[RMDB]
RNA sequence: GGGAACGACUCGAGUAGAGUCGAAAACGCUGGGACUUGAGGCUCCGUGUGUUGUCAGCUGAAGCGCGCACGGCUUGGAUUUACACACGAGCCUUGGUCCUGUGCUGAAGCGCGCACGGCAACCGAAAGGUGCGAAGGUCCUUCUUCGGAAGGACAACACUCUUGCAAGAUUCGUCUUGCAAGAGUGAAAAGAAACAACAACAACAAC
Reactivity to 2A3 in 0.01 (KOAc 150mM, MgCl2 10mM, bicine 150mM(pH8.5), 24C), signal-to-noise 5, nucleotides 027 to 156: c050g020c020u030g010g000g000a020c020u120u300g090a080g020g030c010u070c120c100g000u010g000u010g010u010u180g070u060c030a020g000c030u040g090a210a030g030c050g000c040g040c050a020c030g020g030c020u050u180g120g020a050u140u200u290a010c000a000c000a020c030g000a010g020c040c000u000u010g000g010u010c000c000u000g020u050g000c020u070g010a110a050g020c030g000c000g010c010a010c000g040g000c020a040a060c010c010g100a120a020a020g030g000u010g000c020g030a040a040g120g000u000c010c000u000u000c000u020u060c160g120g000a000a000g000g000a010c000a000a010
Reactivity to DMS in 0.01 (KOAc 150mM, MgCl2 10mM, bicine 150mM(pH8.5), 24C), signal-to-noise 2, nucleotides 027 to 156: c080g000c010u000g000g000g000a030c020u000u000g030a040g020g010c000u000c040c080g040u000g010u010g010u000u010g020u000c030a100g010c000u000g000a070a060g010c000g040c040g000c010a300c010g000g020c030u000u000g050g010a110u010u010u010a080c040a050c000a060c000g020a070g010c000c030u000u010g010g000u000c010c010u000g000u010g000c020u000g000a080a070g010c040g020c020g030c040a300c030g020g000c040a100a140c060c030g000a100a140a130g020g020u000g030c020g010a080a110g000g000u000c000c000u000u000c000u000u010c270g060g040a060a010g020g060a020c000a050a140